[RMDB]
RNA sequence: GGGAACGACUCGAGUAGAGUCGAAAAGUGCAGUGGCACGAUCAUGGCUCACUAUAGCCUCUGCCUCCUGGGCUCAGGUGAUCCUCACAACUCAGCGCCCCCAAGUAGCUGGGACUGCAGGCAUGCACUAUGGCAUGCCGUUCGCGGCAUGCCAUAGAAAAGAAACAACAACAACAAC
Reactivity to 2A3 in 0.01 (KOAc 150mM, MgCl2 10mM, bicine 150mM(pH8.5), 24C), signal-to-noise 3, nucleotides 027 to 126: g070u080g000c040a040g050u110g130g000c040a020c100g050a050u110c070a090u120g050g000c020u040c050a070c040u070a040u140a180g000c010c020u040c020u040g020c000c000u050c010c010u030g020g010g000c030u030c080a050g000g090u010g030a050u020c010c000u040c000a060c020a070a110c020u030c010a020g010c010g050c030c030c030c000c000a050a020g040u020a020g050c020u020g020g010g010a030c030u040g000c020a010g070g000c000a020u070g010c010a020
Reactivity to DMS in 0.01 (KOAc 150mM, MgCl2 10mM, bicine 150mM(pH8.5), 24C), signal-to-noise 4, nucleotides 027 to 126: g040u000g010c020a100g040u000g020g000c000a070c120g000a080u000c110a090u010g000g020c030u010c060a060c080u000a130u010a060g010c010c000u010c050u010g000c050c020u000c030c060u000g000g010g010c030u000c110a080g010g020u000g000a080u000c020c010u000c070a050c080a060a120c040u000c030a020g000c050g000c050c020c020c010c040a080a120g010u000a050g000c030u000g010g010g010a110c080u000g020c040a050g000g010c090a060u000g010c080a120